[RMDB]
RNA sequence: GGGAACGACUCGAGUAGAGUCGAAAAUUGGUGCAGGCGGGCUGCGUCUCCUUCCACAACGGGCACAUCCGCGCAUUCGGAGCGAACAUCGAUGUCGCGAUCGGGAUAAGCUCCCCGAAGUGAAGACACAGACUUACUCUUUCGAGAGUAAGUCUGUAAAAGAAACAACAACAACAAC
Reactivity to DMS in 0.01 (KOAc 150mM, MgCl2 10mM, bicine 150mM(pH8.5), 24C), signal-to-noise 4, nucleotides 027 to 126: u000u000g020g000u000g000c030a060g000g010c060g010g010g010c070u000g010c030g010u010c040u000c040c050u000u000c050c050a060c140a060a170c110g000g010g020c110a090c070a090u010c050c060g010c040g020c060a100u000u000c080g010g000a130g010c030g000a070a100c220a070u000c040g010a040u000g010u010c100g010c170g000a100u000c030g000g000g010a060u000a110a220g000c090u000c020c010c010c010g010a060a170g000u010g010a060a080g000a180c240
Reactivity to 2A3 in 0.01 (KOAc 150mM, MgCl2 10mM, bicine 150mM(pH8.5), 24C), signal-to-noise 2, nucleotides 027 to 126: u090u080g020g020u020g000c020a040g070g020c020g010g000g010c010u020g020c000g030u000c020u010c020c010u060u010c030c040a060c030a090a070c030g010g000g000c080a030c010a140u020c030c030g000c010g040c050a040u020u190c060g040g020a030g000c040g010a050a010c030a060u080c030g050a040u050g080u120c020g020c020g080a060u050c010g030g040g010a020u040a120a030g000c000u030c010c000c020c010g030a040a010g020u050g060a060a030g070a030c030